[RMDB]
RNA sequence: GGGAACGACUCGAGUAGAGUCGAAAAAGCACUUUUUCCUGCGGCAGUAGAAUCAUGCCGCUUUCGCGGGCAAAGCGUUUGCCAAUCAGGAAGUCGCGAUUACCAUGAAUAAAGAAGCAGGGGACGCCACGAAAAUGGGUUUCGACCCAUUUUCGUGAAAAGAAACAACAACAACAAC
Reactivity to DMS in 0.01 (KOAc 150mM, MgCl2 10mM, bicine 150mM(pH8.5), 24C), signal-to-noise 2, nucleotides 027 to 126: a060g000c020a030c100u000u050u020u000u000c000c000u010g000c100g010g010c020a060g010u050a060g060a170a100u010c100a090u000g000c020c000g010c020u000u000u000c030g010c050g010g000g000c150a030a050a160g030c040g020u000u010u020g010c030c090a100a070u010c140a100g000g030a020a030g010u020c010g000c000g000a080u000u000a130c060c030a060u060g040a070a050u010a070a020a060g020a090a090g020c040a030g030g000g020g020a100c110g020c070
Reactivity to 2A3 in 0.01 (KOAc 150mM, MgCl2 10mM, bicine 150mM(pH8.5), 24C), signal-to-noise 4, nucleotides 027 to 126: a000g130c090a100c060u090u110u060u010u010c000c010u050g020c020g020g010c040a040g050u140a050g220a220a090u200c060a050u020g000c010c020g020c000u010u030u010c000g000c000g010g030g020c040a030a070a080g030c020g160u020u090u010g120c030c010a030a150u210c040a040g000g050a070a020g020u050c030g010c020g000a000u000u070a090c020c050a060u120g070a070a060u190a170a160a090g100a090a030g020c040a020g020g010g000g010a010c050g010c020
Overview: Structure probing data (DMS and 2A3) for a 177-nucleotide construct. The reactions ran in a buffer of 150 mM KOAc, 10 mM MgCl2 and 150 mM bicine (pH 8.5), at 24 C. For DMS, 3,037 sequencing reads were counted.